[RMDB]
RNA sequence: GGGAACGACUCGAGUAGAGUCGAAAAGCUCGUAGGUUCAGAUGAUGGGCCCGCAUCUGUACGAAAGACAGACGAAAGUCCAGCCUACGUGCAUGAGCACGCGGGCCCCGUGCUCUACCGCAAAAGAGAGUACUGGACCAUUCGUGGUCCAGUACUCAAAAGAAACAACAACAACAAC
Reactivity to 2A3 in 0.01 (KOAc 150mM, MgCl2 10mM, bicine 150mM(pH8.5), 24C), signal-to-noise 2, nucleotides 027 to 126: g000c000u000c000g000u000a000g010g050u050u070c090a010g000a070u030g000a010u110g040g000g000c020c000c010g000c000a010u000c000u020g070u060a060c100g080a030a150a110g040a010c030a000g050a030c050g080a230a080a000g000u000c000c000a000g030c010c000u010a010c000g000u000g000c000a010u050g000a000g040c000a000c010g020c000g000g030g000c000c010c010c020g000u000g010c000u000c000u000a030c010c040g030c090a110a140a060a000g160a010

Source information
An RNA of 177 nucleotides, treated with 2A3 and read out base by base. Conditions: 150 mM KOAc, 10 mM MgCl2 and 150 mM bicine (pH 8.5), 24 C. Values cover nucleotides 27 to 126.